RNA sequence: GGGAACGACUCGAGUAGAGUCGAAAAUGAGACAAACACGCUUCACAAUGUGCGGCAAAGAAACAUUGUUUAUGCAAAGGCACUUCGCAAUGUGUGCUCAAACAUUGCAUAUUCAAACACGCUUCACAAAAGAAUCAGUGGUUCGCCACUGAUUCAAGUAGUGGAGCUGGUUCGCCAGCUCCACUACAAAAGAAACAACAACAACAAC
Reactivity to 2A3 in 0.01 (KOAc 150mM, MgCl2 10mM, bicine 150mM(pH8.5), 24C), signal-to-noise 3, nucleotides 027 to 156: u110g010a010g010a030c030a010a150a000c050a020c060g010c010u060u060c040a000c040a100a130u050g000u000g000c020g030g060c060a080a000a160g060a050a130a020c030a010u000u000g050u010u010u030a090u100g020c040a010a070a110g060g030c000a010c020u130u120c050g000c130a080a130u080g010u010g010u020g060c030u070c180a060a040a020c020a040u040u000g000c000a000u040a010u070u130c040a020a060a080c110a030c090g120c120u020u100c070a070c040a130a070a030a040g000a000a000u000c000a010g000u010g040g060u020u040c180g110c040c000a000c000u000g020a000u000u000c000a000a000
The record gives the reactivity of an RNA of 207 nucleotides to 2A3.
Conditions: 150 mM KOAc, 10 mM MgCl2 and 150 mM bicine (pH 8.5), 24 C.
It was measured as part of the RMDB library M2RFPK.